[RMDB]
RNA sequence: GGGAACGACUCGAGUAGAGUCGAAAAGAUAUGGAUAACUUCGAUAAGUAUCUUUCGGAAACGAAAGAAUACUUUUGACGAAGUGUCCUAAGUCAAAGCUAAUGUCCCGUUCGCGGGACAUUAGCAAGUAAUAACAGUCGUUCGCGACUGUUAUUACAAAAGAAACAACAACAACAAC
Reactivity to 2A3 in 0.01 (KOAc 150mM, MgCl2 10mM, bicine 150mM(pH8.5), 24C), signal-to-noise 1, nucleotides 027 to 126: g010a000u010a000u040g000g000a030u090a300a240c000u020u000c010g030a040u050a300a020g000u000a000u000c000u000u010u000c010g000g000a020a010a010c000g000a000a000a000g010a050a010u010a000c000u030u080u120u060g030a010c000g000a000a020g000u000g000u000c000c000u010a010a000g000u010c050a130a090a030g000c010u000a000a000u010g010u000c040c010c010g030u060u080c300g010c010g040g000g000a000c000a000u000u000a000g000c000a000a000
Reactivity to DMS in 0.01 (KOAc 150mM, MgCl2 10mM, bicine 150mM(pH8.5), 24C), signal-to-noise 4, nucleotides 027 to 126: g000a010u000a070u010g000g000a010u000a050a020c000u000u000c000g010a060u010a010a010g020u000a000u000c000u000u000u000c000g010g000a030a020a070c000g000a010a000a000g000a040a030u000a000c000u000u010u010u000g020a300c040g000a010a010g010u000g010u000c000c000u010a010a100g000u000c010a100a130a170g000c000u000a000a000u000g010u000c000c000c000g030u000u000c190g030c010g020g000g000a000c000a000u000u000a000g020c010a000a030
An RNA of 177 nucleotides, treated with 2A3 and DMS and read out base by base. Reactivities are given for positions 27 through 126. It was measured as part of the RMDB library TTRDEL. DMS adducts were read by reverse transcription with MarathonRT.